Annotation:
This 177-nucleotide RNA was probed chemically with 2A3 and DMS. As a SHAPE reagent, 2A3 marks flexible, mostly unpaired nucleotides at the ribose 2'-OH. For 2A3, 42,997 sequencing reads were counted. The DMS profile rests on 20,096 reads.
RNA sequence: GGGAACGACUCGAGUAGAGUCGAAAAGAUAUGGAUACACAGCUUUUGACGGCAGCCAUUCGGAAACGAAUGGACCUGCCGAUAAGCUGGUAUCCUAAGUCAAAACGAUAGUGUUCGCACUAUCGAACUGAUAAACAGAGUUCGCUCUGUUUAUCAGAAAAGAAACAACAACAACAAC
Reactivity to 2A3 in 0.01 (KOAc 150mM, MgCl2 10mM, bicine 150mM(pH8.5), 24C), signal-to-noise 9, nucleotides 027 to 126: g010a000u030a000u070g000g010a010u020a010c300a000c010a300g010c020u130u220u300u300g300a300c300g000g000c000a000g020c000c000a000u000u000c000g000g000a020a010a010c000g000a000a000u000g010g010a020c010c010u000g000c000c000g010a020u000a000a000g000c000u000g000g010u010a000u000c000c000u000a010a000g010u000c020a020a020a100a160c030g000a000u000a000g020u020g070u130u110c300g000c130a000c000u010a000u000c000g000a060a020
Reactivity to DMS in 0.01 (KOAc 150mM, MgCl2 10mM, bicine 150mM(pH8.5), 24C), signal-to-noise 7, nucleotides 027 to 126: g000a020u000a120u010g000g000a010u000a000c000a190c010a000g010c000u000u000u010u000g020a210c120g020g010c010a010g010c000c000a010u000u000c000g020g000a030a020a070c000g010a020a000u000g000g010a040c280c030u000g010c000c000g010a020u010a010a010g020c000u000g010g000u000a000u000c000c000u000a000a070g000u000c020a080a070a120a250c020g000a010u000a010g020u000g020u000u010c280g030c000a020c000u000a000u000c000g000a060a150